[RMDB]
RNA sequence: GGGAACGACUCGAGUAGAGUCGAAAACCCGUGAGGUCGAGGAUCCCCGCGCAGGGAGGCAGCCACCAGGAGAAAGCGGAGAAGUCACCUCCAGAGAAACCCUCUCCAACGAACAAAGAAGACCGCUGAGGGGUACUGUUCGCAGUACCCAAAAGAAACAACAACAACAAC
Reactivity to 2A3 in 0.01 (KOAc 150mM, MgCl2 10mM, bicine 150mM(pH8.5), 24C), signal-to-noise 4, nucleotides 027 to 129: c030c010c010g010u060g040a030g020g040u080c070g030a020g020g040a070u040c010c010c010c010g000c020g020c020a050g010g030g000a000g020g000c020a000g010c020c010a040c010c020a000g030g000a020g010a020a090a010g050c030g030g020a000g020a080a010g040u030c000a050c110c010u020c010c010a030g030a010g010a070a090a050c000c000c000u020c020u010c020c010a060a060c070g060a040a010c040a100a090a020g060a020a020g040a060c050c010g000c050u070g040a090g040
Reactivity to DMS in 0.01 (KOAc 150mM, MgCl2 10mM, bicine 150mM(pH8.5), 24C), signal-to-noise 4, nucleotides 027 to 129: c000c030c000g030u050g030a040g020g040u000c060g020a060g040g010a110u060c080c080c000c030g050c160g000c110a060g000g000g000a030g020g020c090a090g040c100c030a090c090c090a100g000g000a060g040a000a110a100g040c050g020g020a090g010a130a070g050u020c040a010c070c020u000c040c060a110g010a000g000a090a070a110c110c040c010u000c000u020c040c040a040a110c090g020a100a070c060a060a090a140g030a090a060g000a110c170c110g000c080u070g000a170g070